[RMDB]
RNA sequence: GGGAACGACUCGAGUAGAGUCGAAAAGGGGGCAGCGUUGCUGCCCUUGCUAUGAGCUUAUGUCUUUGUACUGCCACCUGCAUGGCCAAAACAGGCUUGUCAGCUGGCUGUGGGAGCAGGUGGCUGCUAGGAAUGGGGUACAGAGGUGCCUCCCUGAGGCAUAGGAGUAUUUCGAUACUCCUAUGCCAAAAGAAACAACAACAACAAC
Reactivity to 2A3 in 0.01 (KOAc 150mM, MgCl2 10mM, bicine 150mM(pH8.5), 24C), signal-to-noise 2, nucleotides 027 to 156: g040g000g000g040g010c000a030g040c220g210u210u300g040c010u000g000c010c010c000u000u040g010c010u070a100u130g040a030g020c060u100u040a060u280g140u100c010u000u050u050g010u020a010c060u030g010c010c000a000c000c000u000g000c000a080u120g070g000c000c010a020a160a100a060c070a100g080g040c010u110u150g140u230c050a000g010c080u080g060g010c020u020g040u020g010g020g050a150g030c000a000g000g000u000g000g000c010u000g000c000u050a030g000g120a100a050u210g050g000g000g000u020a010c020a030g050a050g020g080u020g000c010c010u050c000c010c010u010g020a050
Reactivity to DMS in 0.01 (KOAc 150mM, MgCl2 10mM, bicine 150mM(pH8.5), 24C), signal-to-noise 1, nucleotides 027 to 156: g010g010g010g020g060c010a030g010c010g040u000u010g060c010u030g000c000c000c000u000u000g010c030u010a160u000g000a170g000c040u000u000a070u010g020u010c040u010u000u000g030u010a070c040u000g010c010c000a040c010c010u000g040c050a140u000g030g010c000c050a030a050a050a050c050a080g010g000c000u000u020g010u010c120a110g030c020u010g000g080c020u000g000u000g010g010g010a300g020c010a050g030g030u000g010g050c010u000g000c000u000a050g040g030a090a060u000g020g020g030g030u000a040c020a090g010a090g020g010u000g020c090c030u000c020c000c030u000g000a300
The record gives the reactivity of an RNA of 207 nucleotides to 2A3 and DMS. DMS adducts were read by reverse transcription with MarathonRT. For 2A3 the reverse transcriptase was SuperScript II with manganese. Reactivities are given for positions 27 through 156. The data come from the RNA Mapping Database (RMDB), library OK3TST.